[RMDB]
The record gives the reactivity of an RNA of 177 nucleotides to 2A3 and DMS. The reactions ran in a buffer of 150 mM KOAc, 10 mM MgCl2 and 150 mM bicine (pH 8.5), at 24 C. Values cover nucleotides 27 to 126.

RNA sequence: GGGAACGACUCGAGUAGAGUCGAAAAGGAUGUGAAAUUGACUCUAGUAGGGAGUCCGUUUCAACGCGACUCCCUAAUCGAGUCAGGUUGACUUCUUUAAAGGCGUGGGUAGUUCGCUACCCACGCCGUUAUCAGCAUCCUUCGGGAUGCUGAUAACAAAAGAAACAACAACAACAAC
Reactivity to 2A3 in 0.01 (KOAc 150mM, MgCl2 10mM, bicine 150mM(pH8.5), 24C), signal-to-noise 1, nucleotides 027 to 126: g080g020a080u090g030u060g110a000a070a160u080u030g000a000c000u000c000u010a060g030u030a000g060g020g000a010g000u000c020c000g020u130u180u140c110a110a000c000g050c060g010a000c010u000c060c000c030u000a010a020u010c030g000a010g000u000c000a000g000g000u000u010g040a040c000u000u070c010u010u060u060a090a190a010g010g000c010g010u040g060g000g000u000a000g010u040u070c150g030c050u020a020c000c000c010a000c000g000c000c000
Reactivity to DMS in 0.01 (KOAc 150mM, MgCl2 10mM, bicine 150mM(pH8.5), 24C), signal-to-noise 2, nucleotides 027 to 126: g010g000a050u000g010u010g010a020a050a120u000u000g000a020c000u000c000u000a090g020u000a010g010g000g010a020g000u000c010c010g040u000u000u030c250a120a060c020g020c190g000a010c000u000c000c000c020u000a000a010u000c250g000a010g000u000c000a020g000g000u000u000g010a040c090u000u000c020u000u000u000a030a110a190g010g020c000g040u000g000g000g030u000a010g010u000u020c240g000c020u000a000c000c010c000a000c000g010c000c000